[RMDB]
RNA sequence: GGGAACGACUCGAGUAGAGUCGAAAAUACUGGGGCUGACCACCCUAUAGAAGCAGCUCUGCCCCUGGCAACAGCCCCACAUCCCUCUGUCCCAGGGAUGCUUAGGUCGGUGCCUGUCGGACAAGCCCUGUGCUACCAUAUUCGUAUGGUAGCACAGAAAAGAAACAACAACAACAAC
Reactivity to DMS in 0.01 (KOAc 150mM, MgCl2 10mM, bicine 150mM(pH8.5), 24C), signal-to-noise 3, nucleotides 027 to 126: u010a100c210u020g000g010g000g010c010u000g000a120c040c020a300c030c030c020u000a160u000a090g010a120a070g020c120a060g010c060u000c100u000g000c030c010c020c060u000g000g010c040a070a070c040a110g010c020c010c000c160a130c070a030u010c000c010c010u000c080u000g020u000c020c040c040a120g010g000g000a020u000g000c110u000u010a090g020g010u000c040g000g040u000g000c020c010u010g000u020c090g000g000a050c060a080a100g000c030c070
Reactivity to 2A3 in 0.01 (KOAc 150mM, MgCl2 10mM, bicine 150mM(pH8.5), 24C), signal-to-noise 2, nucleotides 027 to 126: u150a020c120u060g010g030g010g010c010u020g070a300c020c010a010c040c050c000u050a060u060a060g040a070a020g000c040a020g020c040u040c060u130g000c020c000c000c000u000g040g000c030a070a030c010a100g030c030c020c000c000a000c020a010u000c000c010c000u050c040u080g090u010c000c000c000a010g000g000g000a010u010g010c020u090u170a030g010g020u070c040g020g000u010g010c010c020u030g110u080c010g020g000a020c020a050a030g030c040c010